RNA sequence: GGGAACGACUCGAGUAGAGUCGAAAAAGAUCCACGCUACGGCGUGGAUCACACGUUCAUCCCUAUUGGGACGGAAGUAGGCAUGGUGCCGAAGGAACGCAUUAGUCAUGCGCUACGGCGCAUGACACACAUCAGAGUCACUUCGGUGACUCUGAAAUCAUUAUAAGUACUUCGGUACUUAUAAUGAAAAAGAAACAACAACAACAAC
Reactivity to DMS in 0.01 (KOAc 150mM, MgCl2 10mM, bicine 150mM(pH8.5), 24C), signal-to-noise 3, nucleotides 027 to 156: a120g000a050u000c010c000a010c000g040c000u000a080c290g040g010c000g050u000g000g040a010u010c020a020c070a020c040g000u010u000c010a190u000c000c000c030u010a150u020u000g020g000g020a030c030g010g000a050a070g010u000a130g020g010c010a160u000g000g000u010g040c000c010g010a090a120g000g000a090a080c050g020c050a170u000u020a110g000u010c050a010u010g020c000g040c000u000a130c260g070g000c010g000c010a000u000g010a000c000a020c090a050c080a090u000c010a020g010a010g000u000c010a010c000u000u010c290g040g030u000g000a010c000u010c000u000g000a000a040a100
Reactivity to 2A3 in 0.01 (KOAc 150mM, MgCl2 10mM, bicine 150mM(pH8.5), 24C), signal-to-noise 7, nucleotides 027 to 156: a000g000a000u010c000c000a000c000g020c010u050a050c270g100g000c000g000u000g000g000a000u000c000a000c000a000c000g010u010u010c010a020u030c010c000c000u130a300u120u300g000g000g010a000c010g010g020a020a020g010u030a020g040g010c090a070u260g170g070u240g090c000c000g010a000a000g030g010a020a010c010g010c060a060u060u140a030g000u000c000a000u010g000c010g000c010u030a030c250g070g020c000g000c000a000u000g000a000c000a000c000a000c000a060u030c000a000g000a000g000u000c000a000c010u050u110c210g080g000u000g000a000c000u000c000u000g000a000a000a000
An RNA of 207 nucleotides, treated with DMS and 2A3 and read out base by base. The 2A3 profile rests on 8,122 reads. For DMS, 8,878 sequencing reads were counted. 2A3 is a SHAPE reagent: it acylates the 2'-hydroxyl of flexible nucleotides of all four kinds. It was measured as part of the RMDB library M2RFPK.